[RMDB]
RNA sequence: GGGAACGACUCGAGUAGAGUCGAAAAGAUAUGGAGCGUAGCUCGCGAUAAGUCGCACUCGGAAACGAGUGUCGACUUUUGACGCGAACUACGCUCCUAAGUCAAAAGGCACACUUCGGUGUGCCAAGAAUCGAGUACAGUUCGCUGUACUCGAUUCAAAAGAAACAACAACAACAAC
Reactivity to 2A3 in 0.01 (KOAc 150mM, MgCl2 10mM, bicine 150mM(pH8.5), 24C), signal-to-noise 2, nucleotides 027 to 126: g010a000u030a040u100g020g000a030g030c000g010u040a000g000c000u010c040g000c130g080a110u100a300a020g010u000c000g010c000a010c010u000c010g040g010a030a030a030c030g020a010g020u040g060u070c020g010a010c020u020u000u030u050g060a040c070g000c000g020a000a010c000u010a000c000g020c020u000c000c010u000a000a000g010u010c000a040a010a010a090g010g020c000a010c010a000c010u080u070c270g120g000u000g020u030g000c000c000a000a000
Reactivity to DMS in 0.01 (KOAc 150mM, MgCl2 10mM, bicine 150mM(pH8.5), 24C), signal-to-noise 3, nucleotides 027 to 126: g020a000u010a300u000g000g000a020g010c000g020u000a010g020c010u000c010g020c000g010a170u000a020a010g000u000c000g010c000a020c000u000c000g020g010a070a080a110c010g000a030g010u000g000u020c010g010a000c000u000u000u010u000g010a200c200g020c010g030a020a010c010u000a000c000g000c000u000c000c000u000a000a050g000u020c030a120a090a140a120g010g000c010a010c010a000c000u000u000c220g020g000u000g010u000g010c000c000a010a020